[RMDB]
The data come from the RNA Mapping Database (RMDB), library RNAMAK.
This 207-nucleotide RNA was probed chemically with 2A3.
The reactions ran in a buffer of 150 mM KOAc, 10 mM MgCl2 and 150 mM bicine (pH 8.5), at 24 C.
For 2A3 the reverse transcriptase was SuperScript II with manganese.

RNA sequence: GGGAACGACUCGAGUAGAGUCGAAAACCGAUCUUCGGAUCGGAUUACGGGGUCUUUGGGUGGGACAUGCGUAGUACCUGAAGCCUCCACGGGUACCUACGCAACAGCCGUAACAUCCCAAAGACGGAGGCACCCUUUACAGCAGAUUCGUCUGCAAUAUCCUAACACGGUUCGCCGUGUUAGGAUAAAAAGAAACAACAACAACAAC
Reactivity to 2A3 in 0.01 (KOAc 150mM, MgCl2 10mM, bicine 150mM(pH8.5), 24C), signal-to-noise 2, nucleotides 027 to 156: c040c000g000a020u000c010u030u080c300g120g010a010u020c020g000g040a010u040u200a090c110g080g000g040g020u050c000u030u010u000g020g020g030u050g100g000g160a180c220a280u190g000c000g000u000a000g000u010a020c000c000u000g020a080a000g000c020c000u000c000c000a000c000g020g000g010u020a030c070c060u000a000c010g020c000a080a120c090a030g160c060c000g010u010a040a000c010a040u220c000c000c050a000a000a010g000a000c000g000g000a000g000g030c000a010c040c000c000u030u200u160a040c050a000g000c000a000g000a000u080u130c050g110u020c110u000g030c010a010a030